[RMDB]
RNA sequence: GGGAACGACUCGAGUAGAGUCGAAAAGAAAAGAAAGGCAAGGAGAACUCACCUGUCGUCGUCGACGAAGGCAUGUGAGCUUCAAUCUCCGUGAAGAGCGUCAGCGGACGGCCUCUGAGACGAGCGAGAACAUCUAACAGUUCGCUGUUAGAUGUUCAAAAGAAACAACAACAACAAC
Reactivity to DMS in 0.01 (KOAc 150mM, MgCl2 10mM, bicine 150mM(pH8.5), 24C), signal-to-noise 4, nucleotides 027 to 126: g010a100a040a070a060g000a060a070a080g000g000c060a110a100g010g010a040g010a040a210c000u000c000a010c000c040u000g020u010c000g010u000c000g000u010c240g000a130c050g020a030a030g010g010c010a010u000g000u000g000a010g000c210u000u000c170a110a120u000c030u000c000c010g000u010g010a100a050g020a060g010c070g000u010c020a080g010c080g000g000a050c070g000g010c070c020u000c020u000g010a120g010a060c080g010a090g010c130g010a160
Reactivity to 2A3 in 0.01 (KOAc 150mM, MgCl2 10mM, bicine 150mM(pH8.5), 24C), signal-to-noise 2, nucleotides 027 to 126: g020a000a060a000a000g060a030a060a000g060g040c100a060a060g060g000a050g000a080a080c000u000c000a010c010c010u010g000u000c020g010u000c010g070u050c050g050a230c060g020a030a000g000g000c010a000u020g020u000g000a000g010c020u100u040c020a040a050u040c010u000c010c010g040u010g030a030a020g050a010g050c040g010u040c050a010g080c070g170g010a010c010g050g000c000c020u030c040u050g020a040g010a030c050g010a010g070c040g020a090
Structure probing data (DMS and 2A3) for a 177-nucleotide construct. Reactivities are given for positions 27 through 126. The 2A3 profile rests on 3,115 reads. High 2A3 reactivity points to a flexible backbone, as in loops and unpaired stretches. Conditions: 150 mM KOAc, 10 mM MgCl2 and 150 mM bicine (pH 8.5), 24 C. DMS adducts were read by reverse transcription with MarathonRT.